RNA sequence: GGGAACGACUCGAGUAGAGUCGAAAAAGUAUCCAAGGAAGGGCAAACUUGAAAGUGGGGCUCAGCACUCAUUGAAAAAAAGUAUAGGUAGGAAAGUAUAUUCUUCCCAUAGAGAUCAAAGAGAAGGUCGGUACUACUAUUUCGAUAGUAGUACCGAAAAAGAAACAACAACAACAAC
Reactivity to DMS in 0.01 (KOAc 150mM, MgCl2 10mM, bicine 150mM(pH8.5), 24C), signal-to-noise 2, nucleotides 027 to 126: a100g020u000a070u000c020c040a110a110g010g010a040a040g020g030g010c060a060a060a120c050u000u000g000a050a080a030g020u000g000g000g000g040c010u000c070a100g010c090a100c040u010c030a080u000u020g000a010a000a060a100a030a090a080g000u000a080u000a050g010g000u000a040g000g000a050a020a100g010u000a030u010a100u000u000c050u000u000c000c000c010a090u010a080g000a060g000a080u000c080a010a100a140g000a060g010a070a090g010g010
Reactivity to 2A3 in 0.01 (KOAc 150mM, MgCl2 10mM, bicine 150mM(pH8.5), 24C), signal-to-noise 1, nucleotides 027 to 126: a000g080u030a090u040c030c010a010a040g020g000a030a020g010g020g000c030a070a060a060c050u030u110g110a150a130a000g010u060g020g020g000g000c000u010c070a010g000c030a010c020u050c030a060u060u100g030a020a070a020a010a000a000a020g030u070a040u060a140g000g000u010a000g000g040a120a000a000g030u010a100u000a000u150u050c010u020u000c000c000c000a030u050a050g090a000g030a040u120c040a040a000a040g090a040g000a120a000g060g020

An RNA of 177 nucleotides, treated with DMS and 2A3 and read out base by base. The RNA was probed in 150 mM KOAc, 10 mM MgCl2 and 150 mM bicine (pH 8.5) at 24 C. For 2A3 the reverse transcriptase was SuperScript II with manganese. The 2A3 profile rests on 994 reads.